An RNA of 177 nucleotides, treated with 2A3 and DMS and read out base by base. Reactivities are given for positions 27 through 126. The RNA was probed in 150 mM KOAc, 10 mM MgCl2 and 150 mM bicine (pH 8.5) at 24 C. The 2A3 profile rests on 5,271 reads. For DMS the reverse transcriptase was MarathonRT. It was measured as part of the RMDB library M2PK50. 2A3 adducts were read by reverse transcription with SuperScript II with manganese.
RNA sequence: GGGAACGACUCGAGUAGAGUCGAAAAUUGUACACCUUCGGGUGUACAAGCUGUCUAGUCGCUAGCAAACGAUCAAAGCUAGCGACAAGACUUUAUUGAUCGCGACGUGCGCUUUCGAGCGCACGAAACAUAAGGUCAGGUUCGCCUGACCUUAUGUAAAAGAAACAACAACAACAAC
Reactivity to 2A3 in 0.01 (KOAc 150mM, MgCl2 10mM, bicine 150mM(pH8.5), 24C), signal-to-noise 4, nucleotides 027 to 126: u000u000g000u000a010c000a000c000c010u020u060c240g120g000g010u000g000u010a010c000a000a000g020c020u030g010u000c010u010a080g000u000c000g020c010u000a000g030c020a060a090a120c140g120a080u150c070a030a080a030g010c000u000a000g050c000g000a000c000a000a000g000a000c010u020u120u040a150u020u110g110a090u080c070g000c060g140a110c010g040u000g000c010g010c000u070u060u080c280g080a010g000c000g000c020a000c000g000a010a000
Reactivity to DMS in 0.01 (KOAc 150mM, MgCl2 10mM, bicine 150mM(pH8.5), 24C), signal-to-noise 5, nucleotides 027 to 126: u000u000g010u000a010c000a010c000c000u000u010c200g030g020g020u000g010u000a000c000a000a010g000c160u010g010u000c010u000a150g000u000c000g010c010u000a000g010c000a040a100a110c110g000a070u010c090a060a140a140g010c000u000a000g000c000g010a000c000a040a020g010a020c030u000u000u000a070u010u000g010a040u000c040g010c250g020a160c010g010u000g010c000g000c000u000u010u020c180g010a020g020c000g010c000a010c000g010a020a060